This 177-nucleotide RNA was probed chemically with DMS and 2A3. The 2A3 profile rests on 1,288 reads. Source: RMDB library OK1LIB, as collected in RNAgym. For DMS, 4,003 sequencing reads were counted.
RNA sequence: GGGAACGACUCGAGUAGAGUCGAAAAUUGUAAUCACAGGGAAAAGGAUACACUGGAUCCCGAAUACCACUACGGGUCGACAACAACUGUUAGAAGAGAGACUAUAUCACUCGUAUCUAUGCCGAGCAAGCGCAACUAAUUUCGAUUAGUUGCGCUUAAAAGAAACAACAACAACAAC
Reactivity to DMS in 0.01 (KOAc 150mM, MgCl2 10mM, bicine 150mM(pH8.5), 24C), signal-to-noise 4, nucleotides 027 to 126: u010u020g040u010a080a080u020c030a060c150a180g030g010g030a050a100a130a030g000g000a100u090a080c150a080c050u000g000g000a180u000c060c030c020g000a120a090u010a110c060c070a130c130u000a040c120g010g000g000u000c000g000a130c150a050a080c160a130a090c090u000g000u000u030a040g020a010a060g000a080g000a040g000a060c100u010a080u030a160u000c080a050c070u020c010g000u030a050u010c090u020a050u060g010c010c030g000a060g010c170
Reactivity to 2A3 in 0.01 (KOAc 150mM, MgCl2 10mM, bicine 150mM(pH8.5), 24C), signal-to-noise 2, nucleotides 027 to 126: u130u030g070u070a020a050u070c040a180c080a280g050g030g100a010a090a050a010g030g030a140u150a180c150a040c010u060g000g010a060u000c000c000c000g010a000a050u090a070c000c000a070c020u100a060c010g000g000g080u060c040g010a010c030a210a000c010a020a100c030u130g060u180u070a010g040a260a000g100a040g070a000g000a000c010u090a040u050a000u240c120a070c010u000c000g050u040a070u000c020u030a050u120g070c070c010g010a020g040c000